Conditions: 150 mM KOAc, 10 mM MgCl2 and 150 mM bicine (pH 8.5), 24 C. The record gives the reactivity of an RNA of 177 nucleotides to 2A3. For 2A3, 468 sequencing reads were counted. Values cover nucleotides 27 to 126.
RNA sequence: GGGAACGACUCGAGUAGAGUCGAAAAAUCAACAUAGACAGUGUGCUGUAGCGUUUUUGUGUUACACAAGACAAUUGCAUGCGUCGGUUCAAGGUCGAGAGAGUGAACUGAUAAACUGCCUCAGCGCGCAGUCGAGGCCAUUCGUGGCCUCGACUGCAAAAGAAACAACAACAACAAC
Reactivity to 2A3 in 0.01 (KOAc 150mM, MgCl2 10mM, bicine 150mM(pH8.5), 24C), signal-to-noise 1, nucleotides 027 to 126: a000u060c040a050a120c050a120u150a090g130a020c100a100g120u060g040u100g120c000u000g030u280a050g030c030g000u000u120u000u000u000g060u000g170u070u280a080c010a000c000a030a000g000a000c070a190a300u120u120g000c000a000u060g030c040g000u090c000g000g030u000u000c080a100a030g200g040u110c050g090a020g030a000g030a000g170u000g000a100a000c000u000g000a000u000a030a120a000c010u000g120c000c020u010c000a000g020c000g000c030